[RMDB]
RNA sequence: GGGAACGACUCGAGUAGAGUCGAAAACUCAUCGUUCGCGAUGAGACUAAUGCUUCGGCAUUAGAACAGAUCGACUACGGUCGAUCUGAGUGACGCUACGGCGUCACAGGAGACACUUCGGUGUCUCCACCAAUGUCUACGGACAUUGGAGCCGCACUUCGGUGCGGCAGUAGAUAACUUCGGUUAUCUACAGUUGCUCGUGAGAGCAACAAAAUAACAAGUACAAACAAAACUGACCAGCUAUGAGGUCAUACAUCGUCAUAGCAACGCUUAGGUUCGCCUAAGCGAAAAGAAACAACAACAACAAC
Reactivity to 2A3 in 0.01 (KOAc 150mM, MgCl2 10mM, bicine 150mM(pH8.5), 24C), signal-to-noise 9, nucleotides 027 to 266: c000u000c000a000u000c000g050u080u070c230g010c010g130a000u000g000a000g000a000c000u000a010a000u000g000c010u030u090c270g130g000c000a000u000u000a010g000a060a020c010a000g000a000u000c000g000a000c010u040a030c300g140g000u000c000g000a000u000c000u000g000a030g000u000g000a000c000g010c010u040a040c300g150g000c000g000u000c000a000c000a020g010g000a000g000a000c020a000c020u100u150c300g110g000u000g000u000c000u000c000c000a010c000c000a000a000u000g000u000c000u020a040c300g110g000a000c000a000u000u000g010g010a050g000c000c010g000c000a000c000u050u080c230g090g000u000g000c000g000g000c010a000g000u000a000g000a000u000a000a010c020u040u050c260g070g000u000u000a000u000c000u000a000c000a010g000u000u000g000c000u010c000g060u100g100a130g000a000g090c010a000a000c010a010a070a010a010u200a050a040c100a070a050g190u280a080c110a100a190a040c080a060a180a160a170c150u120g010a020c050c020a010g000c010u050a040u020g010a010g010g010u020c040a020u170a060c080a110u190c160g050u000c000a000u000a000g000c010a010a020
Reactivity to DMS in 0.01 (KOAc 150mM, MgCl2 10mM, bicine 150mM(pH8.5), 24C), signal-to-noise 2, nucleotides 027 to 266: c000u010c000a000u010c000g000u000u030c150g070c020g000a010u030g000a030g000a300c020u000a010a000u000g010c000u010u010c260g030g030c000a000u000u000a010g030a300a300c000a010g000a010u010c000g000a020c000u000a140c220g040g020u000c000g000a000u000c000u000g000a120g010u000g000a030c000g000c000u010a110c300g070g020c010g010u000c020a020c000a100g000g000a020g010a000c000a000c000u000u050c210g000g010u010g000u000c000u010c000c000a010c040c000a020a010u000g000u000c000u000a140c240g010g010a020c000a000u000u000g010g000a300g050c000c010g010c000a010c000u000u050c160g010g020u010g010c000g000g010c030a020g000u000a010g000a010u000a000a000c000u000u000c180g020g000u010u000a000u000c000u000a010c000a100g000u000u000g000c000u000c000g000u020g020a260g030a010g000c000a040a010c000a070a080a100a080u040a100a090c190a070a120g010u040a160c180a120a080a070c120a070a050a090a100c240u000g000a030c010c010a170g000c020u000a000u010g000a000g000g010u000c010a050u000a040c100a030u020c110g000u000c010a010u000a000g010c000a190a210
The record gives the reactivity of an RNA of 307 nucleotides to 2A3 and DMS. The 2A3 profile rests on 32,155 reads. The reactions ran in a buffer of 150 mM KOAc, 10 mM MgCl2 and 150 mM bicine (pH 8.5), at 24 C. The data come from the RNA Mapping Database (RMDB), library POS240. DMS adducts were read by reverse transcription with MarathonRT. 2A3 adducts were read by reverse transcription with SuperScript II with manganese.